[RMDB]
RNA sequence: GGGAACGACUCGAGUAGAGUCGAAAACCAUUACUUUUUCUCCCUUUUUUGUAGUGGGUUGUCUUUACUUACCUUAAACUCCCUUUUAUACUCUUUUGUGGUUGUGUAGCAACCCUUUGGAGUAUUUAAGUUUGUAAAGGUUCGCCUUUACAAACUUAAAAGAAACAACAACAACAAC
Reactivity to 2A3 in 0.01 (KOAc 150mM, MgCl2 10mM, bicine 150mM(pH8.5), 24C), signal-to-noise 2, nucleotides 027 to 126: c000c000a010u040u100a060c010u040u050u040u070u000c040u060c050c000c000u060u000u000u020u070u200g040u020a070g020u040g040g030g010u050u120g030u020c020u020u080u030a090c040u050u040a070c020c000u060u140a050a060a040c030u060c030c010c020u000u050u070u060a040u010a010c000u010c000u070u000u030u000g110u210g020g040u010u050g030u030g140u180a080g120c000a000a000c000c000c000u000u020u000g020g000a010g010u000a000u000u020u000